[RMDB]
RNA sequence: GGGAACGACUCGAGUAGAGUCGAAAAUUGUACUUCGGUACAACCAUCCUAAGUCUACCUAAGAGGACGAGGUUCUACCCACCAGAUUCGGAAACGAAUCUGAGGAACUACCCACCGUCCUCGAUGGUAGAUAUGGAACCAGUCCUGUUCGCAGGACCUUUCUCCUAUUUUUCGAAAUAGGAGAAAGAAAAGAAACAACAACAACAAC
Reactivity to 2A3 in 0.01 (KOAc 150mM, MgCl2 10mM, bicine 150mM(pH8.5), 24C), signal-to-noise 8, nucleotides 027 to 156: u030u010g000u000a010c000u040u080c290g130g000u000a000c000a010a010c030c030a080u040c000c000u050a140a070g020u000c000u000a000c000c000u050a130a030g000a000g010g000a000c000g010a070g000g010u030u020c060u100a140c030c030c050a130c040c010a020g000a010u000u000c000g030g050a090a060a070c010g000a000a000u000c000u000g010a060g000g010a030a020c030u050a040c040c030c060a140c060c010g000u000c000c010u000c010g000a000u010g000g010u000a000g000a000u000a000u010g010g010a020a070c040c020a040g010u010c000c000u020g040u110u110c300g030c110a000g000g000a010c000
Reactivity to DMS in 0.01 (KOAc 150mM, MgCl2 10mM, bicine 150mM(pH8.5), 24C), signal-to-noise 4, nucleotides 027 to 156: u000u000g020u010a010c020u010u020c260g080g020u000a010c010a020a030c020c040a180u000c000c030u000a080a220g020u000c000u000a000c010c000u010a140a300g000a050g020g010a030c010g010a080g030g020u000u000c000u000a070c030c020c030a300c090c000a020g020a020u000u000c010g010g010a200a130a270c010g030a010a000u000c000u030g000a130g020g000a070a040c030u000a020c030c000c010a300c140c010g010u000c000c020u000c010g000a040u010g000g020u000a020g000a020u000a030u000g010g000a030a050c020c030a130g030u000c010c000u000g020u000u010c190g030c020a030g000g000a040c150
This 207-nucleotide RNA was probed chemically with 2A3 and DMS. It was measured as part of the RMDB library RNAMAK. The DMS profile rests on 6,367 reads. DMS adducts were read by reverse transcription with MarathonRT. The reactions ran in a buffer of 150 mM KOAc, 10 mM MgCl2 and 150 mM bicine (pH 8.5), at 24 C.